The record gives the reactivity of an RNA of 177 nucleotides to 2A3 and DMS. Reactivities are given for positions 27 through 126.
RNA sequence: GGGAACGACUCGAGUAGAGUCGAAAAAGGCUAUGAUUAACGAUAAACUAGUACAUUUUCUGAUCCAGAAUUAUGAUGACAUCCUAAGAGCACCGCUUUCUGGACAGCUCAAAGAUGUGUAUUAAAACGAUGCGAUAUAUUUCGAUAUAUCGCAUCGAAAAGAAACAACAACAACAAC
Reactivity to 2A3 in 0.01 (KOAc 150mM, MgCl2 10mM, bicine 150mM(pH8.5), 24C), signal-to-noise 7, nucleotides 027 to 126: a020g150g010c070u110a060u250g050a200u230u130a130a090c120g110a120u160a140a150a040c070u060a030g050u100a050c030a110u040u080u090u020c040u060g120a280u010c010c010a020g040a110a100u150u170a190u300g080a050u060g020a000c010a020u040c010c040u170a240a060g050a010g030c010a030c040c030g020c090u060u150u030c040u030g000g030a040c050a020g030c060u100c040a050a080a020g050a060u080g010u010g030u050a110u050u190a070a060a020a030
Reactivity to DMS in 0.01 (KOAc 150mM, MgCl2 10mM, bicine 150mM(pH8.5), 24C), signal-to-noise 3, nucleotides 027 to 126: a100g010g020c020u000a040u000g040a050u010u000a060a060c130g020a150u010a080a050a120c120u010a020g000u010a070c040a010u010u000u010u030c010u000g000a160u020c010c010a060g010a080a040u060u000a020u050g020a040u000g000a060c070a050u000c030c070u020a100a080g000a060g010c010a070c010c030g000c220u000u010u010c090u020g010g000a030c080a110g000c300u020c050a020a080a100g000a040u010g000u000g020u010a050u000u010a030a030a030a100
For 2A3 the reverse transcriptase was SuperScript II with manganese. It was measured as part of the RMDB library OK1LIB. The RNA was probed in 150 mM KOAc, 10 mM MgCl2 and 150 mM bicine (pH 8.5) at 24 C.